[RMDB]
RNA sequence: GGGAACGACUCGAGUAGAGUCGAAAAAGAUGCUAUGGACCAAUAGUCAAUGGCACAGUGUCAGGGUUUGGGAGGCUUUUUGUGCCACUCUAUAGCAACCUAAUAUCAUCAUCAAUAGCACUGGAAGACUCUGAAACAAUAUCUAGAUCACUAUUGGUCCCCUGAGAACAUUCGUGUUCUCAGGGGAAAAAGAAACAACAACAACAAC
Reactivity to 2A3 in 0.01 (KOAc 150mM, MgCl2 10mM, bicine 150mM(pH8.5), 24C), signal-to-noise 2, nucleotides 027 to 156: a000g090a060u080g030c010u010a000u090g000g000a000c000c000a030a030u030a050g070u080c040a030a100u070g010g000c000a000c050a040g070u100g050u060c030a000g020g080g000u010u090u100g070g100g010a080g000g000c000u100u020u030u090u100g110u050g000c000c020a010c000u080c020u030a060u030a050g020c030a080a070c000c020u060a080a070u060a000u070c120a020u050c020a000u020c010a070a000u050a120g010c000a020c070u060g080g000a070a030g000a020c040u000c020u150g000a070a080a080c050a040a110u080a040u220c030u030a010g030a060u070c030a030c040u030a050u010u000g000g000
The record gives the reactivity of an RNA of 207 nucleotides to 2A3. 2A3 adducts were read by reverse transcription with SuperScript II with manganese. As a SHAPE reagent, 2A3 marks flexible, mostly unpaired nucleotides at the ribose 2'-OH.